About this RNA: Chemical mapping of a 177-nucleotide RNA with 2A3 and DMS. 2A3 adducts were read by reverse transcription with SuperScript II with manganese. Source: RMDB library TTRDEL, as collected in RNAgym. The reactions ran in a buffer of 150 mM KOAc, 10 mM MgCl2 and 150 mM bicine (pH 8.5), at 24 C. The 2A3 profile rests on 5,834 reads.

[RMDB]
RNA sequence: GGGAACGACUCGAGUAGAGUCGAAAAGAUAUGGAUCAAUAGGGAGACCAAUUUGUCGGAAACGACAAUGCGGUCAUCGAUCUAUUGAGUCCUAAGUCAAACGUUCGGGCGUUCGCGCCCGAACGAACGUAAGUUACCUGUUCGCAGGUAACUUACGAAAAGAAACAACAACAACAAC
Reactivity to 2A3 in 0.01 (KOAc 150mM, MgCl2 10mM, bicine 150mM(pH8.5), 24C), signal-to-noise 2, nucleotides 027 to 126: g020a000u030a020u080g000g000a010u020c000a000a010u010a000g000g040g000a030g000a000c020c020a010a080u010u010u040g000u000c020g010g000a050a000a010c000g000a000c010a020a010u040g030c040g010g000u000c000a000u020c000g000a010u000c000u010a020u000u010g020a040g220u110c000c000u000a030a010g020u020c040a130a080a140c030g010u000u010c000g000g020g020c040g050u090u140c300g040c000g020c120c090c010g010a010a000c010g000a030a000
Reactivity to DMS in 0.01 (KOAc 150mM, MgCl2 10mM, bicine 150mM(pH8.5), 24C), signal-to-noise 3, nucleotides 027 to 126: g000a030u000a050u000g000g000a150u000c000a000a010u000a010g000g000g000a010g020a010c000c000a070a180u010u000u010g030u000c020g010g000a010a030a060c000g010a020c000a010a000u000g010c300g010g010u000c000a090u000c170g010a030u020c000u000a010u000u000g000a050g010u000c010c010u000a020a080g000u000c010a060a110a170c030g010u000u000c000g010g000g000c010g030u000u010c260g020c030g040c000c000c000g000a010a010c000g020a010a050